[RMDB]
Chemical mapping of a 177-nucleotide RNA with DMS and 2A3. 2A3 adducts were read by reverse transcription with SuperScript II with manganese. For 2A3, 3,226 sequencing reads were counted.
RNA sequence: GGGAACGACUCGAGUAGAGUCGAAAAGAUAUGGAUAGGGUAGCUACAUUCAGCGAAGAACUCGGAAACGAGGGAGCUGAUGUAGCAAACCUAUCCUAAGUCAAACAUCUCGGUUCGCCGAGAUGAACAUUUAACGACGGUUCGCCGUCGUUAAAUGAAAAGAAACAACAACAACAAC
Reactivity to DMS in 0.01 (KOAc 150mM, MgCl2 10mM, bicine 150mM(pH8.5), 24C), signal-to-noise 3, nucleotides 027 to 126: g000a030u010a280u000g010g000a010u000a010g010g010g030u000a300g010c020u000a010c000a000u000u000c000a000g020c000g000a070a080g000a140a180c000u000c000g000g000a090a090a170c000g000a020g010g000g010a070g010c000u010g000a010u000g010u000a000g000c010a010a060a240c010c000u000a000u000c000c000u000a000a070g000u000c020a170a160a230c010a010u000c000u000c000g000g000u000u010c250g000c000c020g010a000g000a000u000g010a050a170
Reactivity to 2A3 in 0.01 (KOAc 150mM, MgCl2 10mM, bicine 150mM(pH8.5), 24C), signal-to-noise 2, nucleotides 027 to 126: g010a020u090a040u200g010g000a000u000a000g060g000g130u070a020g020c010u000a000c000a040u090u300c000a030g000c060g230a260a050g050a050a000c000u000c010g000g060a020a100a060c000g000a020g040g000g040a010g000c010u000g000a010u010g000u020a000g000c000a000a000a000c000c010u000a000u020c000c000u000a010a000g010u000c010a000a040a030c000a020u000c000u000c020g000g010u080u070c300g050c110c010g020a000g000a000u000g000a000a000
Conditions: 150 mM KOAc, 10 mM MgCl2 and 150 mM bicine (pH 8.5), 24 C.